[RMDB]
RNA sequence: GGGAACGACUCGAGUAGAGUCGAAAAUUAAUGAAUGUUGAAAGGGAGCGUCAGGAGGGGUUAUCUAGAUGCCUGUGGAUCUAGAUUAUUCAUCAUCCACUGGGAUCUUUAUUGGUGUUCCUUGUCCCCAAGGAGGGAGUCAGCAGCAACAGAAGGAUACUAGCGUAAUAUUCGUAUUACGCUAGUAAAAAGAAACAACAACAACAAC
Reactivity to 2A3 in 0.01 (KOAc 150mM, MgCl2 10mM, bicine 150mM(pH8.5), 24C), signal-to-noise 4, nucleotides 027 to 156: u130u110a010a070u080g100a110a030u100g010u070u040g040a100a070a040g020g000g000a020g030c040g030u040c050a020g020g050a040g000g030g040g000u030u060a030u040c050u050a010g010a020u030g200c000c020u060g030u020g020g000a000u010c060u080a070g020a040u040u080a090u150u200c070a020u020c000a010u000c010c010a010c040u010g000g000g030a000u010c000u040u080u040a170u060u080g050g000u030g050u060u060c000c000u020u050g050u060c020c010c020c010a030a070g090g010a120g020g020g000a020g010u020c010a020g000c030a000g020c010a030a020c010a080g110a130a040g110g010a020
Reactivity to DMS in 0.01 (KOAc 150mM, MgCl2 10mM, bicine 150mM(pH8.5), 24C), signal-to-noise 4, nucleotides 027 to 156: u000u010a070a120u000g010a110a090u010g010u000u000g000a110a110a120g020g010g010a070g030c040g030u010c060a040g010g000a120g030g010g040g020u000u000a070u000c060u010a040g020a030u000g010c030c040u000g000u000g020g020a040u000c040u010a170g000a080u000u020a090u000u010c070a300u000c050a130u000c020c000a030c020u010g000g010g000a030u000c040u000u010u000a060u000u010g000g010u000g000u000u000c020c010u000u000g010u000c020c010c010c040a120a130g020g010a140g000g030g010a080g010u000c050a080g040c060a090g020c050a050a090c040a100g010a070a100g020g010a300
An RNA of 207 nucleotides, treated with 2A3 and DMS and read out base by base.
It was measured as part of the RMDB library OK3TST.
The reactions ran in a buffer of 150 mM KOAc, 10 mM MgCl2 and 150 mM bicine (pH 8.5), at 24 C.
For DMS, 11,250 sequencing reads were counted.
For 2A3, 2,969 sequencing reads were counted.
Reactivities are given for positions 27 through 156.
DMS adducts were read by reverse transcription with MarathonRT.